[RMDB]
RNA sequence: GGGAACGACUCGAGUAGAGUCGAAAAGAUAUGGAACGAGGGAGGAACUACACGGGGAGUGUCGGAAACGACAUGAAAGACGUGCCGAAGAACUCGUUCCUAAGUCAAAGGGAUCUUCGGAUCCCAAGGUGUUAAUGAUGUUCGCAUCAUUAACACCAAAAGAAACAACAACAACAAC
Reactivity to DMS in 0.01 (KOAc 150mM, MgCl2 10mM, bicine 150mM(pH8.5), 24C), signal-to-noise 3, nucleotides 027 to 126: g010a000u000a300u010g000g040a000a020c040g000a030g000g000g020a160g020g000a140a050c080u000a200c020a010c020g000g000g000g040a280g020u000g000u000c000g010g010a060a100a190c000g000a020c000a000u000g000a090a080a170g010a080c020g020u000g000c020c000g020a070a070g020a200a180c020u000c000g010u030u000c000c000u010a020a100g000u030c040a120a110a120g010g000g000a000u000c000u010u020c150g030g000a010u000c010c000c000a000a010
Reactivity to 2A3 in 0.01 (KOAc 150mM, MgCl2 10mM, bicine 150mM(pH8.5), 24C), signal-to-noise 4, nucleotides 027 to 126: g030a020u060a020u150g010g010a010a000c010g010a020g040g030g030a040g020g010a050a050c130u230a020c280a000c030g040g010g050g010a130g040u030g000u010c010g020g030a070a080a050c020g010a000c000a000u050g120a090a090a010g300a040c020g000u020g000c000c010g150a270a060g010a020a020c000u000c000g010u000u000c000c000u010a020a020g010u010c030a040a040a100g010g000g010a000u010c010u080u110c300g110g000a010u020c000c000c000a010a020